[RMDB]
RNA sequence: GGGAACGACUCGAGUAGAGUCGAAAAGAUAUGGAAUUCUAAUACGAGAAACACUCGGAAACGAGUGAAUUUCGAUGAGUAUGGAAUUCCUAAGUCAAACGUCCGAGGAGUUCGCUCCUCGGACGAAUCAUAUUAUUACCUUCGGGUAAUAAUAUGAAAAAGAAACAACAACAACAAC
Reactivity to DMS in 0.01 (KOAc 150mM, MgCl2 10mM, bicine 150mM(pH8.5), 24C), signal-to-noise 2, nucleotides 027 to 126: g000a020u000a020u000g000g000a010a010u000u000c000u010a050a050u010a010c010g010a180g010a010a000a100c010a010c000u000c020g000g000a010a000a030c000g010a010g020u000g000a090a160u000u000u000c000g010a210u020g020a190g000u000a020u000g000g000a010a010u010u000c000c000u030a000a110g000u000c000a150a210a280c030g000u010c010c020g020a010g010g010a020g030u000u020c270g010c000u010c000c000u010c000g030g010a000c010g000a020a040
Reactivity to 2A3 in 0.01 (KOAc 150mM, MgCl2 10mM, bicine 150mM(pH8.5), 24C), signal-to-noise 2, nucleotides 027 to 126: g010a000u030a020u060g000g000a000a000u030u000c000u050a200a120u040a120c050g080a030g030a290a000a030c000a000c000u000c000g000g060a030a000a000c020g020a000g010u010g050a070a170u000u020u000c020g090a180u300g050a020g010u000a010u010g020g000a000a000u000u020c000c000u000a010a000g010u010c050a300a010a140c050g000u000c000c020g030a000g000g020a020g030u150u300c300g130c180u020c000c010u000c000g000g000a000c010g000a000a000